This 177-nucleotide RNA was probed chemically with DMS and 2A3. The reactions ran in a buffer of 150 mM KOAc, 10 mM MgCl2 and 150 mM bicine (pH 8.5), at 24 C.
[RMDB]
RNA sequence: GGGAACGACUCGAGUAGAGUCGAAAAACUUUGGCCGACGCUGGUAGGCGGGUGCGCACUGCUGUCUGGCCCGGCGCCGCGCUAGGGCGCACGUUUCGCUCUGCGGAGGGUAACCGGGCUGAAAUAAUGAUGGUCUUAUAUUCGUAUAAGACCAUCAAAAAGAAACAACAACAACAAC
Reactivity to DMS in 0.01 (KOAc 150mM, MgCl2 10mM, bicine 150mM(pH8.5), 24C), signal-to-noise 6, nucleotides 027 to 126: a090c080u000u000u000g000g010c010c020g020a080c070g010c050u000g010g010u010a070g000g010c030g000g010g020u000g020c060g020c050a080c070u000g010c050u000g000u000c070u010g010g000c000c010c010g010g010c250g010c000c000g000c020g000c040u010a030g010g000g010c000g020c140a060c190g000u000u010u000c010g010c010u000c000u000g010c010g000g000a120g000g010g010u010a090a120c010c010g000g000g000c000u000g000a030a060a080u010a080a130
Reactivity to 2A3 in 0.01 (KOAc 150mM, MgCl2 10mM, bicine 150mM(pH8.5), 24C), signal-to-noise 2, nucleotides 027 to 126: a010c030u120u060u120g050g010c000c010g030a030c040g010c070u090g000g090u060a060g070g020c050g030g030g000u110g010c050g010c010a030c070u080g040c020u020g070u130c060u110g000g000c000c010c020g030g000c020g020c010c000g040c000g000c080u130a020g000g010g010c010g000c020a050c080g040u070u200u160c010g010c000u010c000u030g020c000g050g050a230g140g050g000u020a090a080c000c010g010g000g000c010u030g060a030a030a010u180a040a090